[RMDB]
RNA sequence: GGGAACGACUCGAGUAGAGUCGAAAACUUGGUGGCCUAGGCAGCUCUCAGGCAGACCUGUGCCUGACUCAGUGCUGGGCACUCAGCAGAUGCACCAUACAGUUCUGUUCAGUGGGAGUGUAGGGAGGGAGACUAACUAUUUCGAUAGUUAGUCUCCAAAAGAAACAACAACAACAAC
Reactivity to 2A3 in 0.01 (KOAc 150mM, MgCl2 10mM, bicine 150mM(pH8.5), 24C), signal-to-noise 6, nucleotides 027 to 126: c020u040u080g080g010u090g090g100c010c030u040a110g140g020c020a060g020c020u010c010u000c040a000g010g000c020a020g060a220c020c060u120g040u040g060c010c000u090g040a200c020u030c120a030g020u020g030c020u110g030g120g000c000a010c010u030c010a020g000c020a020g040a150u160g050c040a040c040c020a030u090a200c030a040g040u030u030c020u030g050u090u170c040a090g100u120g040g000g000a080g030u050g030u080a050g010g040g020a090g060
Reactivity to DMS in 0.01 (KOAc 150mM, MgCl2 10mM, bicine 150mM(pH8.5), 24C), signal-to-noise 8, nucleotides 027 to 126: c060u000u000g010g010u000g010g020c020c010u000a070g020g000c060a110g010c030u000c070u000c010a030g000g020c010a050g000a110c190c140u010g010u000g010c020c000u000g000a060c060u000c130a050g020u000g000c010u010g010g010g010c020a020c020u000c140a050g010c050a050g000a130u010g020c060a110c110c130a090u000a080c100a060g000u000u000c020u000g010u000u010c140a110g010u000g010g000g000a060g010u000g010u000a050g000g000g010a140g020